Structure probing data (2A3 and DMS) for a 177-nucleotide construct.
[RMDB]
RNA sequence: GGGAACGACUCGAGUAGAGUCGAAAAGAUGUAUGGGAACAGAAAAUUGAUCAGAUAAUCGAUCAAUUAAAUGGUUGCUCAGAAGCAGCAAAGGAUAUGAGAUUGAUUAUUAGUCAGAAUAUAUUUAAUAUCGAUAGUGAUUCGUCACUAUCGAUAUAAAAGAAACAACAACAACAAC
Reactivity to 2A3 in 0.01 (KOAc 150mM, MgCl2 10mM, bicine 150mM(pH8.5), 24C), signal-to-noise 3, nucleotides 027 to 126: g080a040u100g010u110a040u110g070g010g050a090a030c050a070g180a060a190a050a060u080u030g010a020u070c080a090g040a150u080a060a030u050c020g010a000u000c000a000a000u000u020a010a060a020u060g020g000u010u010g010c010u000c070a090g120a290a010g020c060a010g000c010a100a110a050g080g020a050u070a040u230g040a030g010a030u000u010g000a010u010u010a000u060u040a020g010u000c000a010g050a120a010u190a010u020a090u150u120u070a100
Reactivity to DMS in 0.01 (KOAc 150mM, MgCl2 10mM, bicine 150mM(pH8.5), 24C), signal-to-noise 7, nucleotides 027 to 126: g010a080u000g010u000a050u000g010g000g010a130a110c090a100g010a100a080a070a090u010u000g010a030u000c030a170g010a060u010a020a030u010c040g010a000u000c000a030a110u000u000a020a120a150u010g000g010u000u000g010c020u000c110a170g010a110a110g020c110a020g010c010a010a040a080g020g000a220u010a010u010g000a300g000a030u000u000g010a010u010u000a020u000u000a200g000u000c000a020g000a070a080u010a100u010a060u010u000u010a090

In probing experiments dimethyl sulfate is read out at A N1 and C N3, which are open when not base-paired.
The DMS profile rests on 5,975 reads.